[RMDB]
RNA sequence: GGGAACGACUCGAGUAGAGUCGAAAAGGAGAUCGAAGAAGACCGACGUCAGCACGGUCAGGAUGUAGGUCCGCAUGCAUCCCAGUUGACGAAACUUUACGAUUUCCAAAGCGGACAAGAAGUCAAACAUAGCCUAGUGGUUCGCCACUAGGCUAUGAAAAGAAACAACAACAACAAC
Reactivity to DMS in 0.01 (KOAc 150mM, MgCl2 10mM, bicine 150mM(pH8.5), 24C), signal-to-noise 3, nucleotides 027 to 126: g030g020a000g010a000u020c010g000a180a150g010a050a090g020a110c160c100g010a180c050g000u000c070a020g000c070a150c150g000g010u030c080a090g000g020a000u000g020u010a120g000g020u000c000c010g000c000a140u020g010c040a010u000c000c010c170a070g000u030u000g000a050c120g000a110a040a050c010u000u000u020a150c000g000a030u000u000u000c000c020a000a070a060g000c000g000g000a020c020a140a110g000a140a080g030u040c060a110a120a250
Reactivity to 2A3 in 0.01 (KOAc 150mM, MgCl2 10mM, bicine 150mM(pH8.5), 24C), signal-to-noise 3, nucleotides 027 to 126: g000g000a010g000a010u020c010g030a100a030g040a030a000g110a250c040c080g050a040c040g060u100c030a000g040c090a020c090g070g050u040c060a030g000g000a030u000g010u000a000g000g060u000c000c000g020c000a000u000g000c000a000u000c000c000c010a040g020u000u020g020a030c060g050a090a110a010c020u000u020u080a030c010g010a000u050u000u000c000c010a030a070a000g020c000g000g000a000c000a010a030g120a060a010g100u120c030a000a010a010
This 177-nucleotide RNA was probed chemically with DMS and 2A3. It was measured as part of the RMDB library OK1LIB.